[RMDB]
RNA sequence: GGGAACGACUCGAGUAGAGUCGAAAAAGGGGGUGAUAAAAAUGACAGCAUAUGAAACAAUCUCUUUAAUGAUUGCUUUUGGCAUGCUGAUUGCCAUGUUGUCAGAGAACAAAGAAAAAUAGACCGCGUGCUAUAAUCUUUUCGAAGAUUAUAGCACAAAAGAAACAACAACAACAAC
Reactivity to DMS in 0.01 (KOAc 150mM, MgCl2 10mM, bicine 150mM(pH8.5), 24C), signal-to-noise 5, nucleotides 027 to 126: a100g000g000g000g010g020u000g010a110u040a010a050a070a080a090u000g000a040c010a010g000c020a010u020a080u050g010a010a020a030c010a010a000u000c000u010c240u020u020u040a100a070u040g000a010u000u000g020c090u010u000u000u010g000g010c020a000u000g010c190u030g000a090u010u000g000c020c020a110u010g000u000u000g010u000c010a010g000a090g000a110a100c180a030a070a130g020a030a060a060a050a100u020a090g000a120c080c070g010c240
Reactivity to 2A3 in 0.01 (KOAc 150mM, MgCl2 10mM, bicine 150mM(pH8.5), 24C), signal-to-noise 7, nucleotides 027 to 126: a000g050g020g010g000g010u060g040a100u110a080a130a010a020a030u080g010a000c010a010g010c020a000u080a030u300g120a040a010a000c000a000a000u000c030u030c010u110u240u260a200a140u240g000a000u000u010g040c070u040u050u050u050g010g000c010a010u040g060c090u190g100a180u050u040g000c000c000a010u010g000u000u000g000u010c010a010g020a010g030a070a050c130a150a100a050g160a030a080a030a020a040u040a040g060a000c020c040g060c060
An RNA of 177 nucleotides, treated with DMS and 2A3 and read out base by base.
For DMS the reverse transcriptase was MarathonRT.
It was measured as part of the RMDB libraries RFM100 and RFMREP.
The RNA was probed in 150 mM KOAc, 10 mM MgCl2 and 150 mM bicine (pH 8.5) at 24 C.
Reactivities are given for positions 27 through 126.